[RMDB]
RNA sequence: GGGAACGACUCGAGUAGAGUCGAAAAUGGAUGGUGAUGUCAAACUCAGUUCCAAUCUGGUAAUUCUACCUGGUCAGGAUCUCCAAUAUGUUUUGGCAACCUACGAUACUUCCAGGGUUGAACAUGCGCAGAAAGUCAUAUUCGUAUGACUUUCUGCAAAAGAAACAACAACAACAAC
Reactivity to DMS in 0.01 (KOAc 150mM, MgCl2 10mM, bicine 150mM(pH8.5), 24C), signal-to-noise 3, nucleotides 027 to 126: u020g000g000a130u100g010g030u000g020a090u000g030u020c070a030a030a060c110u000c180a070g000u010u020c030c050a100a020u000c020u030g010g000u030a050a090u020u010c060u020a100c000c020u000g000g020u000c080a090g000g000a070u000c040u020c090c130a090a060u030a040u050g020u020u000u000u000g040g010c100a030a050c060c020u000a170c090g020a090u010a110c160u000u000c030c010a060g000g000g000u000u000g000a050a110c150a050u020g000c300
Reactivity to 2A3 in 0.01 (KOAc 150mM, MgCl2 10mM, bicine 150mM(pH8.5), 24C), signal-to-noise 4, nucleotides 027 to 126: u150g060g010a030u110g010g030u120g000a080u060g040u070c020a050a040a030c030u030c050a020g010u090u030c010c000a000a040u000c010u050g060g000u070a080a120u100u110c050u010a050c010c020u010g000g050u020c090a120g000g080a040u040c020u040c070c040a060a070u180a060u170g070u000u050u070u060g030g000c000a060a020c000c000u030a040c040g030a050u050a150c050u110u030c020c040a040g100g000g010u020u040g000a070a010c030a060u100g050c090

Structure probing data (DMS and 2A3) for a 177-nucleotide construct. The 2A3 profile rests on 2,568 reads. The RNA was probed in 150 mM KOAc, 10 mM MgCl2 and 150 mM bicine (pH 8.5) at 24 C.